[RMDB]
RNA sequence: GGGAACGACUCGAGUAGAGUCGAAAAACCGUCAACUGACGGUCGGGGGCGUCGAGGUGACCGUCCGCGAGCUGAGUUUCAGCGAGCAACUGCGCCACAACCAUCUACUCGCGCCGCUUGGCGACAGCCUGGCCGCUAUUCCCCCGCAGAAGAUGGAACCUAUGCUCACAUUCGUGUGAGCAUAGGUAAAAGAAACAACAACAACAAC
Reactivity to 2A3 in 0.01 (KOAc 150mM, MgCl2 10mM, bicine 150mM(pH8.5), 24C), signal-to-noise 2, nucleotides 027 to 156: a000c000c000g000u000c020a230a220c220u240g010a030c000g020g000u040c050g060g010g000g000g000c030g030u150c040g120a070g000g010u040g060a110c040c010g000u000c020c030g000c050g000a030g000c010u020g050a090g250u110u170u150c020a010g000c020g000a000g010c010a010a010c040u090g010c040g000c010c000a030c020a020a020c000c030a060u020c010u010a000c000u020c010g020c000g030c040c040g040c040u050u110g040g000c000g060a060c030a000g010c030c020u020g010g000c040c000g020c020u090a120u080u120c000c000c000c030c000g000c030a010g010a130a030g010a000u000g010g030a000
Reactivity to DMS in 0.01 (KOAc 150mM, MgCl2 10mM, bicine 150mM(pH8.5), 24C), signal-to-noise 1, nucleotides 027 to 156: a060c020c030g000u030c040a240a210c110u030g000a020c020g000g000u010c020g040g000g000g040g020c030g000u000c050g030a090g000g000u000g010a010c000c030g000u010c060c090g050c010g000a220g030c000u020g010a100g060u000u030u000c100a200g030c020g000a300g010c060a040a060c080u010g030c070g030c130c050a070c050a110a140c030c030a050u000c000u000a140c090u000c000g000c080g050c010c000g090c070u000u000g020g030c020g000a100c110a100g000c050c070u000g050g040c030c000g020c000u000a190u050u000c000c000c040c070c050g000c030a080g020a040a130g040a120u020g010g050a270

Source information: Source: RMDB library OK3TST, as collected in RNAgym. The record gives the reactivity of an RNA of 207 nucleotides to 2A3 and DMS. Conditions: 150 mM KOAc, 10 mM MgCl2 and 150 mM bicine (pH 8.5), 24 C. Reactivities are given for positions 27 through 156. The 2A3 profile rests on 921 reads. 2A3 adducts were read by reverse transcription with SuperScript II with manganese. Values are in units of 0.01, from 0 to 300, in steps of 10.